An RNA of 177 nucleotides, treated with DMS and 2A3 and read out base by base.
The RNA was probed in 150 mM KOAc, 10 mM MgCl2 and 150 mM bicine (pH 8.5) at 24 C.
Values are in units of 0.01, from 0 to 300, in steps of 10.
For DMS, 2,006 sequencing reads were counted.
For 2A3, 3,246 sequencing reads were counted.
Reactivities are given for positions 27 through 126.

[RMDB]
RNA sequence: GGGAACGACUCGAGUAGAGUCGAAAAGAUAUGGAGCGGUACAUCGAUCGUAGGGCUCGGAAACGAGCCUACGGGAGUAUACUCCUAAGUCAAAACCUCAAAUCGAGGUUCGCCUCGAUUUGAGGAAGUUUUUAUGGGAGUUCGCUCCCAUAAAAACAAAAGAAACAACAACAACAAC
Reactivity to DMS in 0.01 (KOAc 150mM, MgCl2 10mM, bicine 150mM(pH8.5), 24C), signal-to-noise 2, nucleotides 027 to 126: g010a040u000a270u000g010g030a020g030c050g010g030u000a010c030a220u010c140g000a110u000c010g000u010a020g010g030g030c030u010c000g010g000a070a070a190c010g000a000g010c010c000u000a000c020g000g000g010a060g020u000a020u000a160c000u000c000c000u010a020a150g000u020c040a090a060a110a130c010c000u010c000a000a010a000u000c000g010a000g000g010u000u010c190g010c000c000u010c000g010a020u000u000u000g010a010g010g020a010a010
Reactivity to 2A3 in 0.01 (KOAc 150mM, MgCl2 10mM, bicine 150mM(pH8.5), 24C), signal-to-noise 2, nucleotides 027 to 126: g030a020u090a040u180g010g020a030g010c260g120g070u010a040c060a300u200c110g150a110u120c010g030u010a060g070g280g020c010u010c000g010g000a070a070a000c000g030a000g000c000c000u000a000c000g000g010g000a020g000u000a000u000a030c000u000c020c000u000a150a010g030u030c040a000a000a080a250c010c000u000c000a010a000a000u000c000g000a000g100g040u010u090c300g100c000c000u000c000g010a020u010u000u000g000a010g000g010a000a010